[RMDB]
Source: RMDB libraries RFM100 and RFMREP, as collected in RNAgym.
Structure probing data (2A3 and DMS) for a 177-nucleotide construct.
Reactivities are given for positions 27 through 126.
The RNA was probed in 150 mM KOAc, 10 mM MgCl2 and 150 mM bicine (pH 8.5) at 24 C.
RNA sequence: GGGAACGACUCGAGUAGAGUCGAAAAGGAAACUUGAAAACUACCGUUAGAUCGAGAAAUGGACGUCCGAGAUUCGUCCACGUCACCAUGAGUUAAAAUUUAACUCGCAGAUUCACUCCUGAGUUAACUCAGCGUUAUUGUUCGCAAUAACGCUGAGAAAAGAAACAACAACAACAAC
Reactivity to 2A3 in 0.01 (KOAc 150mM, MgCl2 10mM, bicine 150mM(pH8.5), 24C), signal-to-noise 3, nucleotides 027 to 126: g050g020a090a040a040c070u130u100g040a070a070a010a050c080u130a110c030c030g090u050u080a060g020a210u070c040g010a000g070a120a100a050u120g000g010a010c030g070u000c080c090g080a070g010a170u050u100c010g000u000c010c000a020c000g020u040c030a050c090c020a040u030g040a000g060u120u130a020a070a090a170u100u130u020a000a000c000u000c020g000c000a000g000a030u010u020c030a010c060u090c000c010u070g010a030g070u100u090a030a010
Reactivity to DMS in 0.01 (KOAc 150mM, MgCl2 10mM, bicine 150mM(pH8.5), 24C), signal-to-noise 2, nucleotides 027 to 126: g030g020a060a070a090c010u000u010g000a020a150a120a120c030u000a040c060c100g000u020u030a080g000a110u000c020g020a120g040a050a100a160u010g030g000a040c010g000u020c110c050g100a180g070a180u000u020c000g070u000c030c040a030c080g030u000c080a060c050c040a040u010g040a050g000u000u010a000a050a090a110u040u000u030a030a020c050u000c020g000c080a030g000a060u000u000c080a070c060u020c010c060u000g000a110g000u000u020a060a100